[RMDB]
RNA sequence: GGGAACGACUCGAGUAGAGUCGAAAACGCUGACGGUUUCUAACCUGUACGGUAUGGUCACCGGGAUGGCGGAAGAUAUGCAGAGUCUGGUCGGCGGAACGGUGGUCCGGCGUAAGGUUUACGCCCGACCGUACAAAGACUUCGGUCUUUGUACGGUAAAAGAAACAACAACAACAAC
Reactivity to DMS in 0.01 (KOAc 150mM, MgCl2 10mM, bicine 150mM(pH8.5), 24C), signal-to-noise 3, nucleotides 027 to 126: c070g020c070u000g020a090c110g000g010u000u010u010c050u000a050a050c030c020u000g020u000a060c050g010g000u010a080u010g010g020u010c030a040c010c020g000g010g010a300u020g010g010c040g000g010a080a050g010a060u000a050u020g020c160a110g000a110g000u000c010u000g020g020u000c020g000g000c030g000g000a240a110c090g010g010u000g000g000u000c000c090g000g010c010g010u000a040a020g000g010u000u000u000a120c070g010c020c000c080g010
Reactivity to 2A3 in 0.01 (KOAc 150mM, MgCl2 10mM, bicine 150mM(pH8.5), 24C), signal-to-noise 2, nucleotides 027 to 126: c030g000c130u110g070a050c070g070g020u050u030u030c050u010a030a070c010c000u050g260u150a000c040g000g050u110a160u110g080g000u030c010a000c000c000g020g000g020a070u060g070g100c030g010g020a030a000g040a020u120a060u300g120c090a040g040a030g260u050c020u070g170g050u120c030g010g230c000g010g000a030a030c000g020g000u010g000g040u050c030c000g070g000c010g020u020a030a030g050g040u090u080u070a080c080g030c000c030c000g020
The record gives the reactivity of an RNA of 177 nucleotides to DMS and 2A3.
The data come from the RNA Mapping Database (RMDB), library OK2TRN.
The RNA was probed in 150 mM KOAc, 10 mM MgCl2 and 150 mM bicine (pH 8.5) at 24 C.
For DMS the reverse transcriptase was MarathonRT.